[RMDB]
RNA sequence: GGGAACGACUCGAGUAGAGUCGAAAAUUCCCCUAUUUCGAUAGGGGAACACCUGCGGGCGGCUCGCAGUUCCGACUUCCUCCUCCUCUGACUCAAAGGGCGAUAGGCCUCGGUUCGCCGAGGCCAACAAAUCCACUAAAUUCGUUUAGUGGAUUUGAAAAGAAACAACAACAACAAC
Reactivity to DMS in 0.01 (KOAc 150mM, MgCl2 10mM, bicine 150mM(pH8.5), 24C), signal-to-noise 6, nucleotides 027 to 126: u000u000c000c000c000c000u000a000u000u000u010c130g010a020u000a010g010g000g010g000a010a010c110a090c090c010u000g000c050g010g000g010c050g010g000c030u000c040g010c050a070g010u000u000c030c020g010a110c060u000u000c020c010u000c020c020u000c020c010u000c020u000g000a090c060u000c080a060a100a110g000g010g000c080g010a120u010a090g000g020c000c000u000c000g010g000u000u010c190g020c000c000g000a010g010g020c000c000a010a050
Reactivity to 2A3 in 0.01 (KOAc 150mM, MgCl2 10mM, bicine 150mM(pH8.5), 24C), signal-to-noise 2, nucleotides 027 to 126: u010u010c000c000c000c000u010a020u040u090u080c160g080a020u010a010g000g000g030g030a000a010c030a030c010c010u020g030c080g040g020g010c040g010g010c050u030c020g020c010a020g020u030u060c040c030g100a110c030u060u020c010c020u020c000c000u010c000c000u000c020u040g010a040c010u010c060a060a070a000g030g030g020c030g040a030u070a120g020g000c010c000u000c000g030g000u020u010c100g010c050c000g000a000g020g000c010c000a000a000
Structure probing data (DMS and 2A3) for a 177-nucleotide construct. Source: RMDB library M2PK50, as collected in RNAgym. The 2A3 profile rests on 4,363 reads.